[RMDB]
RNA sequence: GGGAACGACUCGAGUAGAGUCGAAAAUUCCGCAGGCAACAGCAUUUUCCGCUCAAAUACCAAAGCCAACACAAACAGAAAAAUUGCCCAUAGAAUAUUCAGUACAAGCAUGUUAAUCAUCAAUGCGCUUCAACUUUGAGUUCGCUCAAAGUUGAAGAAAAGAAACAACAACAACAAC
Reactivity to DMS in 0.01 (KOAc 150mM, MgCl2 10mM, bicine 150mM(pH8.5), 24C), signal-to-noise 2, nucleotides 027 to 126: u000u000c000c000g030c190a050g000g000c100a100a110c150a050g020c060a100u000u000u000u000c000c010g000c090u060c000a100a060a090u030a060c030c040a080a110a110g060c040c020a060a030c100a150c070a020a030a110c130a020g000a020a060a010a130a040u020u010g020c020c000c020a080u000a120g000a100a010u030a030u010u030c080a030g010u010a050c140a100a090g000c020a040u000g030u000u000a040a080u000c120a030u050c040a060a000u010g000c080g000
Reactivity to 2A3 in 0.01 (KOAc 150mM, MgCl2 10mM, bicine 150mM(pH8.5), 24C), signal-to-noise 4, nucleotides 027 to 126: u020u000c000c000g030c030a030g070g000c050a020a060c000a070g030c030a040u040u080u060u050c020c040g010c010u020c020a060a070a040u110a050c030c000a030a020a070g000c030c010a060a000c040a000c000a020a260a000c030a010g160a060a170a010a010a050u060u100g020c000c000c020a030u100a020g110a120a020u090a120u100u270c030a000g020u050a020c000a060a070g030c010a020u020g040u090u150a180a050u090c050a020u040c040a050a090u090g010c030g000